[RMDB]
This 207-nucleotide RNA was probed chemically with 2A3 and DMS. For 2A3 the reverse transcriptase was SuperScript II with manganese. The RNA was probed in 150 mM KOAc, 10 mM MgCl2 and 150 mM bicine (pH 8.5) at 24 C. The data come from the RNA Mapping Database (RMDB), library RNAMAK. For 2A3, 2,894 sequencing reads were counted. Reactivities are given for positions 27 through 156.
RNA sequence: GGGAACGACUCGAGUAGAGUCGAAAAGCGUACUACACUCGGACCCGAGCUUGGAUUUAUCAAGAAGCUGUCCCAAAUAGGACAGCCUUGAUUGUCAGCUCGCUAACGAGUGUAUCGCAAAGCAUCCACUCAGCAGUUCGCUGCUGAGUGGAUGCAACUCAGUAUGUUCCUUCGGGAACAUACUGAGAAAAGAAACAACAACAACAAC
Reactivity to 2A3 in 0.01 (KOAc 150mM, MgCl2 10mM, bicine 150mM(pH8.5), 24C), signal-to-noise 2, nucleotides 027 to 156: g020c030g050u110a090c050u000a000c020a000c000u010c000g000g020a030c000c010c000g010a000g010c050u210u250g140g020a080u300u300u110a030u080c010a000a030g040a150a060g090c010u000g000u020c020c010c030a200a300a190u300a090g000g000a000c000a000g000c000c000u000u000g000a000u000u010g010u000c000a000g010c000u000c020g010c050u080a080a000c000g020a010g000u020g000u000a010u020c000g000c000a050a010a030g020c000a000u000c000c000a000c000u000c000a000g000c000a010g010u060u190c220g050c150u000g030c010u000g010a000g000u000g000g000a000u000g000c000a010a000
Reactivity to DMS in 0.01 (KOAc 150mM, MgCl2 10mM, bicine 150mM(pH8.5), 24C), signal-to-noise 1, nucleotides 027 to 156: g000c000g000u010a090c110u010a010c010a000c030u000c000g050g000a300c230c220c000g000a000g040c000u010u030g090g020a070u010u000u000a010u030c010a010a020g030a070a080g060c040u010g010u000c000c030c020a080a230a300u000a040g010g010a050c000a010g040c010c010u000u000g010a010u000u000g010u000c000a050g020c000u020c020g000c010u000a020a270c020g000a040g030u010g000u000a000u000c040g030c030a140a090a180g010c000a030u000c000c000a040c000u010c020a000g060c020a070g030u000u000c300g000c030u000g030c000u000g000a030g010u010g000g010a010u000g010c020a000a000